Source: RMDB library TTRDEL, as collected in RNAgym.
Chemical mapping of a 177-nucleotide RNA with 2A3 and DMS.
The reactions ran in a buffer of 150 mM KOAc, 10 mM MgCl2 and 150 mM bicine (pH 8.5), at 24 C.
[RMDB]
RNA sequence: GGGAACGACUCGAGUAGAGUCGAAAAGAUAUGGACCGUAGGUAGGGAGCGUGUCGGAAACGACCACGCUUUGAUCUACUACGGUCCUAAGUCAAAACCAUAGACGAUGUUCGCAUCGUCUAUGGAACUCUACAGAUACGUUCGCGUAUCUGUAGAGAAAAGAAACAACAACAACAAC
Reactivity to 2A3 in 0.01 (KOAc 150mM, MgCl2 10mM, bicine 150mM(pH8.5), 24C), signal-to-noise 5, nucleotides 027 to 126: g010a010u020a010u070g000g000a010c000c000g010u010a030g220g240u070a010g160g300g000a010g000c010g000u000g000u010c000g000g010a010a010a010c000g000a010c070c080a020c040g000c000u020u030u120g030a020u040c000u000a010c000u000a000c000g000g000u000c000c000u000a000a000g000u000c010a010a010a050a140c010c000a000u010a000g000a000c000g010a000u010g040u100u120c300g010c150a000u000c000g000u000c000u000a000u000g000g000a000a000
Reactivity to DMS in 0.01 (KOAc 150mM, MgCl2 10mM, bicine 150mM(pH8.5), 24C), signal-to-noise 4, nucleotides 027 to 126: g000a010u000a100u010g000g000a020c000c000g010u000a010g020g020u010a010g020g010g000a010g000c010g020u000g020u000c000g010g000a030a010a030c010g010a010c180c140a000c000g000c000u000u000u020g010a080u010c010u000a040c000u000a010c010g010g000u000c000c000u000a000a040g000u000c000a090a110a150a220c000c000a010u000a000g000a020c000g010a010u000g000u000u010c250g020c000a000u000c000g010u000c000u000a000u000g000g000a030a070
DMS adducts were read by reverse transcription with MarathonRT. High DMS reactivity at an A or C suggests that its Watson-Crick edge is free. For 2A3, 21,744 sequencing reads were counted.